[RMDB]
RNA sequence: GGGAACGACUCGAGUAGAGUCGAAAAUUUAGUGUGAGUGUGCCUGCUUCUGGAGGUGCAUCUGAGAGUGAGAGAGGUGUGAAAGUGUGCAAGCAUGAAGAAAAUGUUGGUUUUUUCCGUACAGACAACACUGAGUAUUGCGCUCCUUUCGAACUGGGCCAUCUAUGUAUUUCGAUACAUAGAUGGCAAAAGAAACAACAACAACAAC
Reactivity to DMS in 0.01 (KOAc 150mM, MgCl2 10mM, bicine 150mM(pH8.5), 24C), signal-to-noise 2, nucleotides 027 to 156: u000u010u000a080g030u000g030u000g010a130g000u010g040u010g000c010c020u010g000c040u000u000c100u000g030g040a060g020g030u000g000c020a060u000c040u000g000a120g030a140g020u010g000a150g000a060g000a050g050g010u040g010u010g010a080a070a080g010u000g010u000g020c070a120a220g030c040a070u010g010a060a090g010a030a060a040a060u000g020u010u000g020g010u000u010u000u000u010u000c020c000g040u000a080c040a140g020a120c040a040a050c010a040c010u000g010a240g030u000a130u000u000g010c000g010c030u000c010c020u000u010u010c000g000a060a100c110u010g000g030
Reactivity to 2A3 in 0.01 (KOAc 150mM, MgCl2 10mM, bicine 150mM(pH8.5), 24C), signal-to-noise 3, nucleotides 027 to 156: u130u160u050a120g020u050g010u000g040a130g010u030g010u000g040c000c020u080g020c040u180u100c100u180g150g020a050g010g000u040g010c000a030u040c020u010g090a060g010a020g050u040g020a030g010a010g000a010g000g000u040g000u020g100a030a030a020g050u060g030u020g030c010a010a040g050c000a010u110g060a040a070g030a030a070a030a030u060g030u000u010g060g040u020u000u010u000u100u080c040c030g010u060a060c010a040g060a060c020a060a020c050a090c060u020g020a010g030u060a110u100u070g020c040g010c000u050c020c020u030u050u060c000g020a080a060c030u040g010g070
Overview:
This 207-nucleotide RNA was probed chemically with DMS and 2A3. The data come from the RNA Mapping Database (RMDB), library OK3TST. Reactivities are given for positions 27 through 156. The RNA was probed in 150 mM KOAc, 10 mM MgCl2 and 150 mM bicine (pH 8.5) at 24 C.